[RMDB]
An RNA of 177 nucleotides, treated with DMS and read out base by base. The RNA was probed in 150 mM KOAc, 10 mM MgCl2 and 150 mM bicine (pH 8.5) at 24 C. For DMS the reverse transcriptase was MarathonRT. Reactivities are given for positions 27 through 126.
RNA sequence: GGGAACGACUCGAGUAGAGUCGAAAAAUUGAUGCGAAGGGGGGACGGAGAAGGCUAUGUUGGCCGGCCGACGGUUGUCCCGGUUUAAGCGUGUAGGCUGGUUUUCCAGGCAAAUCCGGAAAUUGAAUUGUCGUAUACUAUUCGUAGUAUACGACAAAAAAGAAACAACAACAACAAC
Reactivity to DMS in 0.01 (KOAc 150mM, MgCl2 10mM, bicine 150mM(pH8.5), 24C), signal-to-noise 5, nucleotides 027 to 126: a110u000u000g000a090u000g010c040g010a060a080g010g010g000g010g000g010a090c050g000g000a070g000a100a110g010g000c040u000a070u000g020u010u000g020g010c010c020g010g010c050c030g010a070c060g000g010u000u010g010u000c040c010c000g010g010u000u000u010a060a100g010c040g010u000g020u000a080g010g020c010u000g010g010u000u000u000u000c080c030a150g010g000c050a040a050a110u000c030c010g000g000a040a050a100u010u010g010a090a150